The data come from the RNA Mapping Database (RMDB), library RNAMAK.
Structure probing data (2A3) for a 207-nucleotide construct.

[RMDB]
RNA sequence: GGGAACGACUCGAGUAGAGUCGAAAAGCUUUACGUUCGCGUAAAGCAAAAAAUCCUAAGUCUGGCGCUGAGGUUUAAGCUAGUCGGAAACGACUUGGACCUUAAACUACCCACCAGCACCAGAUAUGGAAAAAAGUCAGGCCUUCGGGCCUGACAACCUGGAACGUAAGUUCGCUUACGUUCCAGGAAAAGAAACAACAACAACAAC
Reactivity to 2A3 in 0.01 (KOAc 150mM, MgCl2 10mM, bicine 150mM(pH8.5), 24C), signal-to-noise 1, nucleotides 027 to 156: g000c000u020u000u010a000c010g020u030u100c190g000c000g070u000a010a000a000g000c000a010a020a020a020a020a020u070c060c000u070a140a000g000u000c000u010g000g000c020g010c010u000g030a020g010g000u010u000u000a010a010g010c010u020a010g020u000c010g020g050a160a100a110c020g010a030c000u060u060g140g060a090c020c000u000u000a010a000a010c010u050a070c070c110c020a020c030c010a010g000c000a000c000c010a000g010a000u030a040u070g010g080a000a090a010a180a000a040g020u010c000a000g010g020c010c020u080u290c260g100g030g020c020c000u000g000a000c000a000a000